RNA sequence: GGGAACGACUCGAGUAGAGUCGAAAAAAGAAGAGAGUCGAGAGCUAUCAGGACAUUGAUUCUCUGUUUGAUGACCUCAUCGACACUGGGUUUCGACAAGAGUUUGUGGCUGAGAAGAUGGGACACAUUGAAUUUUCAGAAUGCUUGGCUCAUCGUGACGGAAUACAACAUUCGUGUUGUAUUCCGUAAAAGAAACAACAACAACAAC
Reactivity to DMS in 0.01 (KOAc 150mM, MgCl2 10mM, bicine 150mM(pH8.5), 24C), signal-to-noise 3, nucleotides 027 to 156: a090a080g000a090a070g000a070g010a050g030u000c010g010a080g000a120g050c050u000a120u000c080a100g010g010a070c060a140u000u000g000a040u010u000c030u010c030u000g020u010u010u000g020a140u010g010a090c080c080u000c040a090u010c030g010a050c050a110c070u010g020g020g020u000u000u000c060g010a080c040a050a110g000a080g000u000u010u010g010u000g000g010c000u000g000a160g030a090a080g000a050u000g000g000g030a060c030a010c020a050u000u000g010a050a150u000u000u000u020c140a170g010a070a030u000g010c000u010u000g000g010c020u000c020a060u000c040g010u000g000
Reactivity to 2A3 in 0.01 (KOAc 150mM, MgCl2 10mM, bicine 150mM(pH8.5), 24C), signal-to-noise 5, nucleotides 027 to 156: a000a010g130a060a000g030a010g020a010g010u030c030g020a000g000a010g100c060u110a040u160c040a030g010g070a050c070a100u060u130g050a090u230u030c080u000c030u050g070u040u060u100g080a090u060g030a040c010c050u080c040a100u040c030g030a040c010a010c100u050g000g000g050u020u030u080c020g020a010c020a090a040g010a010g050u060u130u170g030u070g010g060c030u020g010a010g010a140a030g020a020u020g010g000g050a020c010a010c000a080u010u040g110a150a100u130u120u110u130c050a050g060a090a050u040g020c080u070u030g010g030c010u010c040a060u030c070g060u060g050